[RMDB]
RNA sequence: GGGAACGACUCGAGUAGAGUCGAAAACAACCCAACUCCUACUCAAUACGUCCUCGUCGUACAGAACGGUAACAUGUUUUCCGAACAUCCGCGCUUGGGUAUAAGAGUAUACACCUUACCCAACCCUCCAACCACCUAAAGUUCGCUUUAGGUGGAACGGUAUGCCCUUGUUCGCAAGGGCAUACCGAAAAGAAACAACAACAACAAC
Reactivity to 2A3 in 0.01 (KOAc 150mM, MgCl2 10mM, bicine 150mM(pH8.5), 24C), signal-to-noise 1, nucleotides 027 to 156: c040a040a130c000c020c080a000a030c090u060c040c030u100a080c020u000c070a140a120u000a190c040g090u070c030c000u040c040g080u030c030g000u080a110c000a060g070a060a030c000g080g000u050a030a000c020a220u100g040u000u000u110u140c030c030g010a030a010c010a070u040c000c020g070c000g030c130u000u000g000g000g040u040a070u060a040a060g080a030g040u000a030u040a100c100a030c030c000u030u080a010c000c010c030a020a050c000c000c000u000c000c000a040a090c010c000a000c000c000u000a000a000a000g000u010u080c120g000c110u020u010u000a000g020g000u000g000g000a000a000